[RMDB]
RNA sequence: GGGAACGACUCGAGUAGAGUCGAAAAGAUAUGGAUUGGGCGCCAUACGUUUGACGUCGGAAACGACCGAGUAUGGAACUACGCUGACCAAUCCUAAGUCAAAGGAUGUACGUUCGCGUACAUCCAACGAUGCAUCCCUGUUCGCAGGGAUGCAUCGAAAAGAAACAACAACAACAAC
Reactivity to DMS in 0.01 (KOAc 150mM, MgCl2 10mM, bicine 150mM(pH8.5), 24C), signal-to-noise 3, nucleotides 027 to 126: g010a050u010a300u000g010g000a000u000u000g010g000g070c030g000c010c010a000u010a000c000g000u020u000u000g000a140c300g000u000c000g000g010a050a130a170c020g030a010c000c010g000a050g020u000a010u010g000g010a080a060c130u030a160c050g000c040u030g000a270c030c000a000a010u000c000c000u010a070a120g000u000c060a080a230a160g000g010a000u010g000u000a000c000g020u010u010c200g010c030g020u000a010c010a010u000c000c000a020a060
Reactivity to 2A3 in 0.01 (KOAc 150mM, MgCl2 10mM, bicine 150mM(pH8.5), 24C), signal-to-noise 2, nucleotides 027 to 126: g040a000u070a040u130g000g000a000u000u000g010g050g000c000g000c000c000a000u010a010c010g040u040u230u270g090a040c020g000u000c000g010g000a090a050a050c020g010a000c000c010g010a020g030u000a010u000g000g020a010a020c080u220a050c100g060c120u190g190a130c000c030a000a000u030c000c000u020a200a020g060u020c080a120a010a050g010g020a000u010g000u000a000c000g030u000u110c300g000c010g100u000a000c010a010u000c000c010a010a000